[RMDB]
RNA sequence: GGGAACGACUCGAGUAGAGUCGAAAAAGUUCAAGACUGGGACUACAUCGAACUGGAAGUUCUCAGAAUGAGAAAGUUUCUGGAUCUCAACGAGUGCGAGAUCGGCAUCGUUCAUUUCGUAGUCUCCUCUAAGGAACUGCUUCGGCAGUUCCUUAGAAAAAGAAACAACAACAACAAC
Reactivity to DMS in 0.01 (KOAc 150mM, MgCl2 10mM, bicine 150mM(pH8.5), 24C), signal-to-noise 2, nucleotides 027 to 126: a050g020u000u020c060a090a060g020a140c110u000g000g000g000a010c000u000a020c020a090u010c180g020a020a020c010u020g000g010a080a040g000u000u000c000u010c010a230g000a070a100u010g000a020g010a000a020a050g000u000u010u010c000u010g030g000a030u000c010u000c020a050a250c070g000a080g020u010g000c250g000a060g010a040u000c050g020g000c110a060u010c090g000u000u000c010a130u000u010u000c130g000u000a000g000u000c000u000c020c160
Reactivity to 2A3 in 0.01 (KOAc 150mM, MgCl2 10mM, bicine 150mM(pH8.5), 24C), signal-to-noise 2, nucleotides 027 to 126: a030g050u060u090c070a120a000g070a110c070u160g010g000g030a000c010u010a010c010a050u070c070g030a020a000c040u040g030g040a030a010g030u050u030c000u010c020a170g190a210a220u230g000a010g010a040a090a150g070u020u090u010c040u050g000g050a020u000c040u000c000a080a050c080g120a070g110u250g130c060g000a040g030a080u040c020g050g040c020a020u100c020g020u040u000c010a110u050u080u210c040g000u000a020g040u010c030u010c000c010

Chemical mapping of a 177-nucleotide RNA with DMS and 2A3. In probing experiments dimethyl sulfate is read out at A N1 and C N3, which are open when not base-paired. For 2A3 the reverse transcriptase was SuperScript II with manganese. Reactivities are given for positions 27 through 126. The reactions ran in a buffer of 150 mM KOAc, 10 mM MgCl2 and 150 mM bicine (pH 8.5), at 24 C.